[RMDB]
RNA sequence: GGGAACGACUCGAGUAGAGUCGAAAAUAUAAACAAACUGUCUGUCAAGCACUGUUAGGAAUAUGAUUAGAUAAAUGUGAUGUGGGUCCUCCCUUCAGGGAGUUCAUUCUGUAGACAUGGUAUAGAAAGAUUUACAGUUCGAAGAGACAAGAGCUCACACUGAUAAAUCAUUCGUGAUUUAUCAGUGAAAAGAAACAACAACAACAAC
Reactivity to DMS in 0.01 (KOAc 150mM, MgCl2 10mM, bicine 150mM(pH8.5), 24C), signal-to-noise 2, nucleotides 027 to 156: u000a140u000a100a090a160c060a030a060a180c030u010g010u000c030u030g000u010c040a090a100g020c040a050c050u000g010u000u000a100g010g030a040a100u010a080u010g010a100u000u010a110g000a100u000a040a100a070u010g010u000g000a080u000g020u020g000g030g020u000c060c030u000c010c000c030u010u000c140a130g000g060g010a030g050u000u000c020a050u000u010c060u000g020u000a030g020a070c020a030u020g000g010u000a120u010a110g010a090a080a130g000a100u000u000u000a030c030a060g010u010u000c060g000a050a060g010a140g020a090c060a060a120g010a070g010c040u000c050a160
Reactivity to 2A3 in 0.01 (KOAc 150mM, MgCl2 10mM, bicine 150mM(pH8.5), 24C), signal-to-noise 4, nucleotides 027 to 156: u130a010u060a040a080a020c050a050a090a030c060u040g070u030c010u030g060u060c050a000a030g010c020a020c020u020g020u080u070a040g010g080a100a070u110a070u210g060a080u080u120a100g060a080u070a090a170a090u090g020u040g040a060u060g010u060g010g020g020u030c010c000u020c000c000c020u090u180c080a040g010g000g000a010g010u020u030c020a040u080u010c020u050g050u060a010g010a020c020a030u040g020g040u030a020u010a070g090a020a100a010g020a010u060u120u120a050c030a000g010u030u030c050g050a090a040g020a030g020a040c040a100a010g040a040g060c020u030c040a020
Structure probing data (DMS and 2A3) for a 207-nucleotide construct. Conditions: 150 mM KOAc, 10 mM MgCl2 and 150 mM bicine (pH 8.5), 24 C. For DMS, 3,990 sequencing reads were counted.